[RMDB]
Background: Chemical mapping of a 177-nucleotide RNA with 2A3 and DMS. Conditions: 150 mM KOAc, 10 mM MgCl2 and 150 mM bicine (pH 8.5), 24 C. For DMS the reverse transcriptase was MarathonRT. The data come from the RNA Mapping Database (RMDB), library OK2TST.
RNA sequence: GGGAACGACUCGAGUAGAGUCGAAAACGCUAUUGUCGGUGCGAUGAAUAUCGGCCUUUCGACACCCGGUGCCGGCAUUUUCUCGCUCUUUUUACUUCAUGAUAAUGGCGCGGGCGGUGUUAUGGCGCCCUAAGUGCGGUUUCGACCGCACUUAGGGAAAAGAAACAACAACAACAAC
Reactivity to 2A3 in 0.01 (KOAc 150mM, MgCl2 10mM, bicine 150mM(pH8.5), 24C), signal-to-noise 3, nucleotides 027 to 126: c020g000c020u060a040u110u060g060u050c040g000g020u050g080c030g050a070u090g050a170a080u110a030u170c020g040g000c020c000u060u160u130c040g020a010c000a040c020c020c030g090g050u090g000c020c000g010g080c000a020u100u040u050u020c030u000c030g060c010u010c020u060u180u050u070u100a120c040u100u200c050a140u180g050a050u070a080a020u050g020g000c030g000c020g040g040g020c030g000g030u010g010u070u040a130u130g030g000c010g080
Reactivity to DMS in 0.01 (KOAc 150mM, MgCl2 10mM, bicine 150mM(pH8.5), 24C), signal-to-noise 3, nucleotides 027 to 126: c050g010c060u010a040u010u010g020u000c020g010g020u000g020c020g020a020u010g010a090a050u010a080u000c030g020g000c060c070u000u000u010c050g020a070c070a080c060c040c090g010g000u010g020c010c000g010g000c100a020u000u000u000u000c120u000c020g020c040u000c000u010u000u000u000u010a090c130u010u000c150a110u000g000a080u000a040a040u000g000g010c040g000c050g000g000g020c210g000g010u000g010u000u010a090u010g020g020c060g020